Source: RMDB libraries RFM100 and RFMREP, as collected in RNAgym.
This 177-nucleotide RNA was probed chemically with DMS and 2A3.
RNA sequence: GGGAACGACUCGAGUAGAGUCGAAAAAAAAGUAAGAGUGUAACAGGAAGAAAGUUGCAGCAUAUACGCGGUGAAUUAUUCGGUGUCAUAGGAGUAGAGUCUUUUGGUAAGAUGCUGAUAAUGAGUAACGAUAGGAGACUUUCGAGUCUCCUAUCGUAAAAGAAACAACAACAACAAC
Reactivity to DMS in 0.01 (KOAc 150mM, MgCl2 10mM, bicine 150mM(pH8.5), 24C), signal-to-noise 3, nucleotides 027 to 126: a060a020a080a080g020u020a070a050g010a090g010u000g010u020a070a070c070a050g010g010a060a040g020a050a070a060g010u000u000g010c050a080g020c070a070u020a090u010a090c100g000c070g030g010u010g020a050a040u010u010a070u020u000c050g000g000u010g010u030c030a050u030a040g000g000a030g000u020a080g000a110g000u000c020u020u010u010u010g000g030u030a030a100g010a020u010g010c040u000g000a020u010a040a070u030g000a080g030u020a070
Reactivity to 2A3 in 0.01 (KOAc 150mM, MgCl2 10mM, bicine 150mM(pH8.5), 24C), signal-to-noise 2, nucleotides 027 to 126: a000a010a000a000g110u130a020a000g000a060g020u070g070u110a150a070c030a080g010g080a050a060g020a180a130a070g090u090u090g040c000a020g000c010a090u080a000u000a100c040g000c050g070g000u090g070a100a060u180u020a000u050u040c010g000g000u000g040u030c010a010u070a150g020g030a000g030u070a050g020a020g170u060c020u000u040u060u070g040g000u020a010a010g040a050u000g000c040u020g050a080u020a170a040u120g010a000g140u030a000

The 2A3 profile rests on 1,101 reads. Reactivities are given for positions 27 through 126.